[RMDB]
RNA sequence: GGGAACGACUCGAGUAGAGUCGAAAAAGCAGUGAGAGCAUGUGGAAGUUUGGUUUUUGAUGGCUCUUUUCUCAGUGAAAUAGGAAGCAAGGUCAUCAGACGAUAAUGAGAAGAGAAAGAAGAUUUAGGUUUGAAUGAGAUACAUGGACUGGGUGACAUUUACCCUCCGUUUCGACGGAGGGUAAAUAAAAGAAACAACAACAACAAC
Reactivity to 2A3 in 0.01 (KOAc 150mM, MgCl2 10mM, bicine 150mM(pH8.5), 24C), signal-to-noise 4, nucleotides 027 to 156: a000g040c050a020g000u010g040a080g000a000g040c060a040u060g000u060g090g060a080a130g030u040u120u130g070g010u070u040u050u110u060g050a030u030g010g000c040u040c000u150u020u060u010c040u010c020a070g040u050g190a110a110a070u140a060g020g030a020a020g040c120a080a030g070g000u020c020a050u010c030a030g030a030c090g010a050u070a160a100u130g050a020g010a110a010g030a000g050a030a100a000g020a020a000g030a040u090u100u130a010g010g060u000u030u110g030a030a040u070g000a020g020a070u060a070c070a070u050g040g010a020c040u070g000g020g000u020g000a010c020
Reactivity to DMS in 0.01 (KOAc 150mM, MgCl2 10mM, bicine 150mM(pH8.5), 24C), signal-to-noise 2, nucleotides 027 to 156: a060g010c060a080g020u010g030a090g010a100g030c030a100u000g000u000g020g010a090a040g030u000u000u010g020g020u000u000u000u010u000g000a090u030g020g000c040u010c030u000u010u000u000c010u000c050a120g010u000g010a140a070a160u000a070g030g010a040a090g050c190a060a070g020g030u000c040a050u000c050a110g020a050c050g000a090u010a070a100u030g000a070g020a050a090g020a060g010a040a060a110g000a080a050g010a100u000u000u010a030g010g020u000u000u000g010a060a060u000g000a120g020a090u000a040c040a040u010g020g000a090c030u000g010g020g040u000g020a080c140
An RNA of 207 nucleotides, treated with 2A3 and DMS and read out base by base.
The reactions ran in a buffer of 150 mM KOAc, 10 mM MgCl2 and 150 mM bicine (pH 8.5), at 24 C.
Values cover nucleotides 27 to 156.
For 2A3 the reverse transcriptase was SuperScript II with manganese.
For DMS the reverse transcriptase was MarathonRT.
It was measured as part of the RMDB library OK3TST.